This 177-nucleotide RNA was probed chemically with 2A3 and DMS. The RNA was probed in 150 mM KOAc, 10 mM MgCl2 and 150 mM bicine (pH 8.5) at 24 C. For 2A3, 6,336 sequencing reads were counted. The DMS profile rests on 5,073 reads.
RNA sequence: GGGAACGACUCGAGUAGAGUCGAAAAGCCUCUAGCGUUUGCAAAACGCUGUUUGCGCAAUGAUCUCGAUUUAGCGCAAGUAGGUCCGAAAUCCAGAUCAACAUUUCGGACAACCGCGCUAAUUAAAACCUAUCAUCGAAUUCGUUCGAUGAUAGGUAAAAGAAACAACAACAACAAC
Reactivity to 2A3 in 0.01 (KOAc 150mM, MgCl2 10mM, bicine 150mM(pH8.5), 24C), signal-to-noise 4, nucleotides 027 to 126: g020c010c000u000c040u050a000g010c000g020u020u050u270g180c080a140a170a020a010c010g000c010u000g040u000u070u040g080c100g000c010a050a090u180g050a090u030c020u020c040g090a100u010u030u040a000g000c000g000c010a000a030g060u090a060g150g040u000c000c000g010a000a000a020u060c090c060a130g050a300u150c010a000a090c010a050u000u000u000c000g000g000a010c000a010a000c020c030g000c000g000c000u000a000a020u070u120a030a060a020
Reactivity to DMS in 0.01 (KOAc 150mM, MgCl2 10mM, bicine 150mM(pH8.5), 24C), signal-to-noise 5, nucleotides 027 to 126: g000c010c020u010c080u000a010g010c010g010u000u000u020g020c300a070a070a030a010c000g020c000u000g010u010u000u000g020c140g010c040a070a100u010g010a100u000c010u010c020g020a080u000u000u000a010g000c000g000c000a060a090g010u010a090g010g000u000c000c000g010a000a010a010u000c150c100a170g010a160u010c190a070a110c210a030u000u000u000c000g000g000a000c000a010a030c110c160g010c010g010c000u000a000a010u000u000a040a050a090